Chemical mapping of a 177-nucleotide RNA with DMS and 2A3. DMS adducts were read by reverse transcription with MarathonRT. For 2A3 the reverse transcriptase was SuperScript II with manganese. Source: RMDB library OK2TST, as collected in RNAgym. Conditions: 150 mM KOAc, 10 mM MgCl2 and 150 mM bicine (pH 8.5), 24 C. Values cover nucleotides 27 to 126.

[RMDB]
RNA sequence: GGGAACGACUCGAGUAGAGUCGAAAAAUGCAGUUUUUUCUCGCCGAGGUGACGCAAGUCGAGAUAAACCACAUCGCCACGCGGCGUGGAGAUGGUGUUGCCUUUACGCCAUUCGUGCCAGAAGGCACCCGUAUCAUACGUUCGCGUAUGAUACGGGAAAAGAAACAACAACAACAAC
Reactivity to DMS in 0.01 (KOAc 150mM, MgCl2 10mM, bicine 150mM(pH8.5), 24C), signal-to-noise 6, nucleotides 027 to 126: a080u010g010c090a070g000u000u000u000u000u000u000c010u000c020g010c070c030g010a290g010g000u000g030a100c280g000c100a050a170g010u000c040g000a040g010a070u000a040a020a060c040c060a100c030a040u000c060g010c020c020a040c070g010c170g010g020c050g020u000g000g000a050g000a040u000g000g010u000g010u000u010g010c040c020u000u000u010a100c190g000c020c020a170u000u010c160g010u000g010c010c100a220g000a030a050g010g010c020a090
Reactivity to 2A3 in 0.01 (KOAc 150mM, MgCl2 10mM, bicine 150mM(pH8.5), 24C), signal-to-noise 5, nucleotides 027 to 126: a000u120g000c050a030g030u060u010u000u000u040u000c010u000c010g000c010c010g050a050g060g030u070g040a030c030g020c130a060a040g020u050c020g010a010g000a060u100a020a080a020c010c020a040c010a080u060c050g030c050c000a030c040g060c060g180g000c050g020u020g030g010a090g010a030u020g010g050u050g030u070u070g040c020c000u040u090u030a020c020g010c000c010a080u140u160c090g060u160g020c000c010a110g000a150a060g040g010c000a030